An RNA of 177 nucleotides, treated with DMS and 2A3 and read out base by base. The data come from the RNA Mapping Database (RMDB), library OK2TRN.
RNA sequence: GGGAACGACUCGAGUAGAGUCGAAAAAGGAGCUGCGAGGCCGGCAGCAAGCGCGCCAGAGUCAACGCGCUCCCCGCAGACAUUGAGACGAGCUGCAAGGCAUGGGCGGAGAAGCUGGUGGGCAUCACUUACUAAAUCAGUUCGCUGAUUUAGUAAGAAAAGAAACAACAACAACAAC
Reactivity to DMS in 0.01 (KOAc 150mM, MgCl2 10mM, bicine 150mM(pH8.5), 24C), signal-to-noise 9, nucleotides 027 to 126: a120g010g010a120g030c010u000g020c020g010a110g010g020c040c030g000g010c010a020g010c030a190a080g010c040g020c020g000c020c020a050g000a090g010u000c020a070a190c020g010c010g000c010u000c080c020c030c070g010c040a040g000a060c050a140u000u010g000a130g000a120c170g000a110g000c010u000g010c030a070a070g020g010c250a070u010g000g000g010c030g000g000a270g010a040a050g010c020u000g000g010u000g000g000g010c030a120u010c120a140
Reactivity to 2A3 in 0.01 (KOAc 150mM, MgCl2 10mM, bicine 150mM(pH8.5), 24C), signal-to-noise 7, nucleotides 027 to 126: a000g100g010a080g000c030u030g000c060g060a070g070g120c040c040g080g010c010a010g010c050a080a060g040c100g000c000g010c030c000a030g020a010g090u030c030a040a030c020g000c010g080c050u020c010c000c000c020g000c010a010g030a070c050a070u110u300g120a120g030a150c110g040a090g040c000u020g000c040a060a140g010g000c110a080u150g020g020g000c030g000g020a060g010a040a000g010c020u030g000g030u040g010g090g000c010a020u050c010a020
The RNA was probed in 150 mM KOAc, 10 mM MgCl2 and 150 mM bicine (pH 8.5) at 24 C. For DMS the reverse transcriptase was MarathonRT.